[RMDB]
RNA sequence: GGGAACGACUCGAGUAGAGUCGAAAAAGGUGAUUUCUCCUGCACCUUUAUCAAUGGAGGAACUCGACUUUGCUGUGGGUCCCAAAGGGAUCUUAGGUGCAGACAGUUACCGGCGGUGAAGUGUGAGCAUAGGUUCGUGUCUUCGGACACGAACCAAGCUGAUUAGUACGUUCGCGUACUAAUCAGCAAAAGAAACAACAACAACAAC
Reactivity to DMS in 0.01 (KOAc 150mM, MgCl2 10mM, bicine 150mM(pH8.5), 24C), signal-to-noise 2, nucleotides 027 to 156: a080g020g030u000g000a300u000u010u000c020u010c020c020u020g000c030a020c010c020u000u010u000a070u010c200a050a120u010g010g000a270g000g010a050a030c030u000c000g020a040c060u000u000u010g010c040u000g000u000g000g010g030u000c010c000c000a050a130a240g040g030g010a020u000c050u000u000a050g040g000u000g000c010a190g020a130c180a090g040u000u000a050c000c020g000g020c040g010g030u010g000a030a070g020u010g000u000g000a090g060c050a150u000a120g040g020u000u000c000g070u000g010u000c000u020u000c300g000g020a060c000a010c010g000a010a000c000c030a030a030
Reactivity to 2A3 in 0.01 (KOAc 150mM, MgCl2 10mM, bicine 150mM(pH8.5), 24C), signal-to-noise 5, nucleotides 027 to 156: a000g010g010u010g000a030u020u040u000c020u000c000c010u150g050c010a010c010c000u110u180u100a070u030c050a040a090u290g010g010a020g010g010a040a030c020u010c020g020a010c030u020u050u080g000c040u030g010u090g030g000g000u020c020c000c030a120a090a050g040g000g010a020u020c040u050u140a060g000g000u010g000c010a010g070a270c040a020g030u050u070a010c000c020g020g010c020g030g000u030g040a040a020g030u080g040u100g120a020g010c070a110u100a200g010g000u000u000c000g000u000g000u000c000u010u030c170g080g000a000c000a000c000g000a000a000c000c000a000a000
Conditions: 150 mM KOAc, 10 mM MgCl2 and 150 mM bicine (pH 8.5), 24 C. Structure probing data (DMS and 2A3) for a 207-nucleotide construct.